Chemical mapping of a 177-nucleotide RNA with DMS and 2A3. The reactions ran in a buffer of 150 mM KOAc, 10 mM MgCl2 and 150 mM bicine (pH 8.5), at 24 C.
RNA sequence: GGGAACGACUCGAGUAGAGUCGAAAAAAAGUUGGUCACAUGGGUGUCUAGGCACAAGGCCAGCUUUAUAUGAAUGAUUUGGCAGCCGUCCAAGGAAGGUUGGCUGUUGGCCAAGACAGGGAUUACAGGUCAUUAUAUGGUUCGCCAUAUAAUGACCAAAAGAAACAACAACAACAAC
Reactivity to DMS in 0.01 (KOAc 150mM, MgCl2 10mM, bicine 150mM(pH8.5), 24C), signal-to-noise 3, nucleotides 027 to 126: a030a030a040g030u010u000g020g010u010c020a140c140a140u020g010g010g010u000g000u000c040u010a130g010g020c000a020c010a060a070g020g000c000c000a020g010c010u000u000u000a060u000a110u010g000a120a060u000g000a120u000u000u000g000g000c030a120g010c090c100g010u010c020c020a060a100g010g000a090a050g010g000u000u000g000g010c010u010g000u010u000g000g000c030c000a070a040g000a030c030a050g000g020g010a110u030u010a090c190a150
Reactivity to 2A3 in 0.01 (KOAc 150mM, MgCl2 10mM, bicine 150mM(pH8.5), 24C), signal-to-noise 2, nucleotides 027 to 126: a000a000a000g070u050u020g010g000u090c040a090c090a200u130g250g100g000u040g040u030c040u020a100g090g000c010a010c000a040a060g010g000c000c000a000g000c000u030u050u020a170u010a040u100g140a100a040u130g080a140u070u050u090g030g010c020a040g110c030c060g070u050c030c000a020a030g180g020a140a010g060g000u040u000g000g000c000u000g040u020u040g010g000c000c020a000a020g040a020c030a040g000g000g090a040u030u170a100c070a140

DMS adducts were read by reverse transcription with MarathonRT. For DMS, 3,368 sequencing reads were counted.